[RMDB]
RNA sequence: GGGAACGACUCGAGUAGAGUCGAAAAAUCGGUACUGACUGCGGCAGCGCCCCUGGCUAAAUCGCCGGUGCGAACGCCCUCUUCUAAUGCGCGAUUGAUCGCCUGUUCAAUGGCCGUUGCCGCAUCGUCAGUGAUUACGGUUCGCCGUAAUCACUGAAAAAGAAACAACAACAACAAC
Reactivity to DMS in 0.01 (KOAc 150mM, MgCl2 10mM, bicine 150mM(pH8.5), 24C), signal-to-noise 4, nucleotides 027 to 126: a050u010c040g000g010u020a100c070u000g000a050c100u020g000c000g000g000c000a000g010c000g000c190c010c270c140u010g010g010c010u000a150a010a010u000c030g010c000c020g010g020u020g000c110g010a060a050c150g000c010c020c060u010c060u020u020c100u020a100a060u040g010c190g020c000g000a010u000u000g000a200u030c210g000c000c000u010g010u020u040c260a070a120u030g010g020c230c040g010u010u010g010c000c000g000c000a000u010c060g000
Reactivity to 2A3 in 0.01 (KOAc 150mM, MgCl2 10mM, bicine 150mM(pH8.5), 24C), signal-to-noise 8, nucleotides 027 to 126: a000u130c070g060g040u110a060c040u110g080a030c100u020g000c000g010g000c000a010g000c010g000c010c000c010c020u010g000g000c020u040a050a040a010u030c010g010c020c020g040g020u100g030c040g080a120a040c100g020c020c020c010u070c070u170u070c070u140a180a090u200g020c060g000c010g110a000u010u030g030a050u160c100g000c010c000u030g060u160u150c170a170a130u150g030g000c060c020g000u000u000g010c010c000g000c000a000u010c010g010

Record summary:
This 177-nucleotide RNA was probed chemically with DMS and 2A3. For 2A3, 9,055 sequencing reads were counted. The DMS profile rests on 13,188 reads. The RNA was probed in 150 mM KOAc, 10 mM MgCl2 and 150 mM bicine (pH 8.5) at 24 C. The data come from the RNA Mapping Database (RMDB), library OK1LIB.